[RMDB]
RNA sequence: GGGAACGACUCGAGUAGAGUCGAAAAGCUCGGAGACGAGCAAGGCUGACAAAACAAUGUCCCAACCUCCACGUGGUGUCGGCUGGAUAAUGCUGCAUUAUGUUGCAUUUAUCAACUGGGAAAUAAACGUGGCAGCAUGCUUCGGCAUGCUGCCACGAAAAGAAACAACAACAACAAC
Reactivity to 2A3 in 0.01 (KOAc 150mM, MgCl2 10mM, bicine 150mM(pH8.5), 24C), signal-to-noise 1, nucleotides 027 to 126: g000c000u000c000g020g000a080g040a020c010g010a000g000c020a040a000g020g000c020u000g000a000c010a030a020a010a000c040a070a110u060g020u050c000c000c000a010a040c000c000u050c030c010a060c020g030u130g000g000u000g030u010c000g040g000c000u020g000g010a010u040a000a000u010g000c030u030g000c100a060u040u240a230u300g050u020u040g010c020a010u100u120u020a030u000c000a010a010c040u140g000g030g000a030a030a060u050a000a080a020
An RNA of 177 nucleotides, treated with 2A3 and read out base by base.